This 177-nucleotide RNA was probed chemically with DMS. DMS adducts were read by reverse transcription with MarathonRT. For DMS, 702 sequencing reads were counted.
[RMDB]
RNA sequence: GGGAACGACUCGAGUAGAGUCGAAAAAAUAAGGUAUAUGAGAGCUGGUUAAUAGUGGCUAGCAGUAAUAAUAGGUUAGUUGAUGAGUGGUACAACGUGACUACACAAAUGAUGAAUUACAGUAAGCAGGUAGUUGAAUGUUCGCAUUCAACUACCUAAAAGAAACAACAACAACAAC
Reactivity to DMS in 0.01 (KOAc 150mM, MgCl2 10mM, bicine 150mM(pH8.5), 24C), signal-to-noise 1, nucleotides 027 to 126: a200a020u010a040a070g000g000u020a010u000a030u000g000a150g000a060g060c080u000g020g040u000u000a130a090u000a040g010u000g010g030c050u000a060g030c040a010g040u020a120a010u010a100a060u000a080g030g000u000u000a070g020u000u000g010a180u000g020a090g000u000g040g000u010a040c080a050a070c140g000u000g020a000c080u010a030c060a090c090a030a010a090u000g000a080u000g000a060a140u000u010a060c090a110g000u010a100a050g030c210